[RMDB]
RNA sequence: GGGAACGACUCGAGUAGAGUCGAAAAGAACUUUGGCCGGCUCGGGAUAGAAUCAGGGGGUGCAAACUGCCCACUGGCAGAAAGGAUUAUAGCAAAUGCGUACCCUAUUGCAAUACAGCCCGGCCAACAUAGACUACUCUAUUCGUAGAGUAGUCAACCACUAUCAAAAGUUCGCUUUUGAUAGUGGAAAAGAAACAACAACAACAAC
Reactivity to 2A3 in 0.01 (KOAc 150mM, MgCl2 10mM, bicine 150mM(pH8.5), 24C), signal-to-noise 2, nucleotides 027 to 156: g010a070a020c020u030u000u030g000g000c000c000g010g000c010u040c080g080g030g000a040u060a120g090a100a050u190c080a080g000g000g000g000g030u060g010c010a040a060a090c010u030g000c000c010c080a120c180u130g000g010c020a010g060a050a080a020g090g050a050u160u140a100u280a130g070c050a060a040a060u080g020c010g020u070a070c010c000c000u020a060u020u080g070c030a050a040u060a170c030a030g020c010c060c000g000g000c000c000a000a000c010a000u040a040g000a000c000u000a000c000u000c000u010a030u110u060c090g060u090a000g000a000g000u000a000g000u000c010a000a000
Reactivity to DMS in 0.01 (KOAc 150mM, MgCl2 10mM, bicine 150mM(pH8.5), 24C), signal-to-noise 1, nucleotides 027 to 156: g010a060a040c080u000u030u000g020g020c010c010g010g030c130u000c070g000g020g000a180u000a100g010a160a250u020c050a110g020g010g000g030g060u000g000c000a060a080a230c050u000g030c040c000c160a100c120u010g010g040c030a050g030a300a100a090g020g000a180u020u000a120u030a080g020c040a070a100a110u010g010c060g000u020a090c000c000c010u000a100u000u000g040c050a090a170u000a120c090a040g000c080c000c050g050g000c020c020a010a020c070a110u000a180g010a020c000u000a000c000u010c000u010a090u000u010c240g040u000a020g000a030g010u000a000g040u000c000a010a080